[RMDB]
RNA sequence: GGGAACGACUCGAGUAGAGUCGAAAAGAUAUGGACCCUGUGAAGAGACAAGAUCGAAGACAUGCGAUACCCAUCGGAAACGAUGGGUCGCAACAGCUUCGAUCUUGUCUUGGAGGGUCCUAAGUCACGUAUAUUAAUAGUUCGCUAUUAAUAUACGAAAAGAAACAACAACAACAAC
Reactivity to 2A3 in 0.01 (KOAc 150mM, MgCl2 10mM, bicine 150mM(pH8.5), 24C), signal-to-noise 3, nucleotides 027 to 126: g030a020u090a100u180g000g000a020c010c000c000u270g300u030g300a050a030g000a010g000a010c000a000a000g000a010u000c000g010a000a000g070a110c070a170u110g000c000g030a020u170a110c010c010c010a010u010c000g030g070a140a060a030c000g000a000u000g000g040g010u000c000g000c000a020a010c040a020g020c010u000u000c010g000a000u000c000u000u000g000u000c000u000u000g000g000a000g000g000g010u010c000c000u010a030a010g020u010c020a020
Reactivity to DMS in 0.01 (KOAc 150mM, MgCl2 10mM, bicine 150mM(pH8.5), 24C), signal-to-noise 9, nucleotides 027 to 126: g010a060u010a300u000g010g010a010c000c000c000u000g010u010g010a300a200g000a010g010a010c000a010a000g010a010u000c000g000a010a010g010a040c110a290u000g000c000g000a100u010a060c010c000c000a010u000c000g000g000a120a130a180c000g020a010u000g000g000g010u000c000g000c000a020a050c300a150g000c010u000u000c000g000a000u000c000u000u000g000u000c000u000u000g000g000a010g020g010g010u000c000c000u000a000a060g000u000c040a300